Structure probing data (DMS and 2A3) for a 207-nucleotide construct. The reactions ran in a buffer of 150 mM KOAc, 10 mM MgCl2 and 150 mM bicine (pH 8.5), at 24 C.

[RMDB]
RNA sequence: GGGAACGACUCGAGUAGAGUCGAAAAAGUUCUAGUCCUCACCUAAGAUCAGACUGACAAGGCCCUCAAAGCAAGAGCACUAGGUUGGGCUUUGUGGUGGGGAUAAGUGUCUCAUUUUUAGUCCCAAAUUAAAAACGAGAUUUUGGGCUGUACAUCACGUUUUAUAUGAUUUCGAUCAUAUAAAACGAAAAGAAACAACAACAACAAC
Reactivity to DMS in 0.01 (KOAc 150mM, MgCl2 10mM, bicine 150mM(pH8.5), 24C), signal-to-noise 3, nucleotides 027 to 156: a070g020u000u010c060u000a250g020u000c010c010u010c010a050c000c000u000a110a130g020a090u010c080a160g000a150c050u000g000a200c020a060a050g020g000c000c010c010u000c050a100a090a150g010c070a050a080g010a160g040c050a090c070u010a100g000g020u010u000g020g020g000c030u010u000u000g030u000g020g050u010g010g000g020g010a020u000a010a080g000u010g030u010c000u010c010a050u000u000u000u000u000a070g010u000c040c110c100a040a070a050u010u010a020a020a020a030a040c010g000a040g000a080u010u010u000u000g010g020g040c040u000g010u000a070c080a140u000c020a220
Reactivity to 2A3 in 0.01 (KOAc 150mM, MgCl2 10mM, bicine 150mM(pH8.5), 24C), signal-to-noise 4, nucleotides 027 to 156: a000g040u090u050c020u040a030g050u020c000c000u020c000a010c010c020u110a100a030g020a110u110c080a050g170a270c060u190g000a020c020a010a000g010g000c010c010c010u040c040a100a130a050g040c030a100a030g050a010g080c030a010c110u080a060g130g000u090u030g020g010g000c000u000u010u020g030u030g000g000u000g000g000g010g000a000u020a010a000g020u000g030u010c010u000c050a080u120u090u060u090u180a020g080u150c020c000c000a000a000a030u060u050a060a070a050a030a020c130g040a070g010a120u020u010u020u050g010g000g000c010u040g050u110a060c050a090u100c070a030